[RMDB]
Source: RMDB library TTRDEL, as collected in RNAgym. An RNA of 177 nucleotides, treated with 2A3 and DMS and read out base by base. The RNA was probed in 150 mM KOAc, 10 mM MgCl2 and 150 mM bicine (pH 8.5) at 24 C. For DMS the reverse transcriptase was MarathonRT. For 2A3 the reverse transcriptase was SuperScript II with manganese. Values cover nucleotides 27 to 126. DMS (dimethyl sulfate) methylates the pairing face of unpaired adenines and cytosines.
RNA sequence: GGGAACGACUCGAGUAGAGUCGAAAAGAUAUGGAACACGAAGAACAUGCCUCCCGAAGAACUCGGAAACGAGGGAGGGAGCAUGGGAGUGUUCCUAAGUCAAAACCUACAGCUUCGGCUGUAGGAACUAAAACUUUACGUUCGCGUAAAGUUUUAGAAAAGAAACAACAACAACAAC
Reactivity to 2A3 in 0.01 (KOAc 150mM, MgCl2 10mM, bicine 150mM(pH8.5), 24C), signal-to-noise 3, nucleotides 027 to 126: g020a020u060a040u150g000g000a010a010c010a010c050g300a300a180g070a160a010c010a020u000g000c000c080u010c000c000c010g100a180a040g020a050a000c000u010c010g020g090a090a060a040c020g000a010g000g030g000a040g010g000g010a000g000c000a000u010g000g000g030a050g000u000g000u000u000c000c000u000a070a010g050u020c020a020a050a110a190c010c010u010a000c010a010g050c010u060u290c300g180g000c000u000g010u000a010g000g000a000a000
Reactivity to DMS in 0.01 (KOAc 150mM, MgCl2 10mM, bicine 150mM(pH8.5), 24C), signal-to-noise 3, nucleotides 027 to 126: g000a030u010a300u000g000g010a000a010c010a020c000g000a140a140g000a140a180c020a010u010g000c190c060u000c010c000c020g010a110a150g000a170a140c000u000c000g000g010a130a070a120c010g010a010g000g010g000a060g010g020g000a030g010c010a010u000g000g010g000a100g010u010g000u000u000c000c000u000a030a090g000u010c030a100a080a060a170c000c000u010a000c010a020g010c000u000u010c220g040g000c000u000g010u000a000g000g010a020a080